Description: This 177-nucleotide RNA was probed chemically with DMS. The reactions ran in a buffer of 150 mM KOAc, 10 mM MgCl2 and 150 mM bicine (pH 8.5), at 24 C. In probing experiments dimethyl sulfate is read out at A N1 and C N3, which are open when not base-paired.
RNA sequence: GGGAACGACUCGAGUAGAGUCGAAAAAACAGCUGCUUCGGCAGCUGUUAACGCUCGCCGCUCGAGGCUGCACGAGCCGGACAGCAGCCAGUCCGCGAGCUAUAGCCUUGGAGUUCGCUCCAAGGAAAUUAACGUCCCUGUUCGCAGGGACGUUAAUAAAAGAAACAACAACAACAAC
Reactivity to DMS in 0.01 (KOAc 150mM, MgCl2 10mM, bicine 150mM(pH8.5), 24C), signal-to-noise 2, nucleotides 027 to 126: a030a000c000a020g000c000u000g000c020u000u010c220g040g010c000a000g040c000u000g000u010u000a040a090c190g010c020u020c040g010c040c100g000c040u000c030g010a120g010g070c010u000g000c040a160c080g000a120g030c120c090g010g000a100c100a060g020c020a020g020c020c010a100g000u000c020c100g000c020g010a020g030c020u000a050u010a070g000c000c000u000u000g000g000a010g010u000u020c270g010c000u000c000c000a020a000g020g020a010a010